[RMDB]
RNA sequence: GGGAACGACUCGAGUAGAGUCGAAAAGAGCCGUGCGAGUGCCACGCCUAACGCCGUUGGGACAGCGGGACGAAGCAGCCGCGAGUGUCCUUUGGAGCCAGCGGCGCCUGCUGGCCGCAGUUGGGCGCGUAGUAUAGCCCUUCGGGGCUAUACUACGAAAAGAAACAACAACAACAAC
Reactivity to 2A3 in 0.01 (KOAc 150mM, MgCl2 10mM, bicine 150mM(pH8.5), 24C), signal-to-noise 5, nucleotides 027 to 126: g060a020g040c030c020g040u080g050c060g040a080g050u170g070c020c020a030c050g040c000c020u030a030a010c000g060c100c030g060u070u120g030g010g040a060c010a010g030c060g030g010g000a050c080g100a100a020g070c100a020g060c030c040g040c010g020a070g090u160g160u110c040c020u070u070u240g040g000a040g100c010c000a000g000c000g000g000c000g010c000c000u020g000c000u010g020g020c010c000g040c020a040g010u070u090g020g000g000c010g000
Reactivity to DMS in 0.01 (KOAc 150mM, MgCl2 10mM, bicine 150mM(pH8.5), 24C), signal-to-noise 3, nucleotides 027 to 126: g020a090g000c050c010g010u010g000c020g010a090g010u020g010c030c040a140c040g000c020c040u010a050a050c030g020c110c090g010u010u000g000g000g030a070c000a040g020c080g000g000g010a140c150g030a130a130g020c160a100g000c020c050g000c010g000a210g000u020g000u000c000c030u050u030u020g000g010a190g000c010c040a160g000c010g000g000c030g000c030c000u000g000c010u000g000g010c010c010g010c050a150g010u000u000g010g010g010c000g040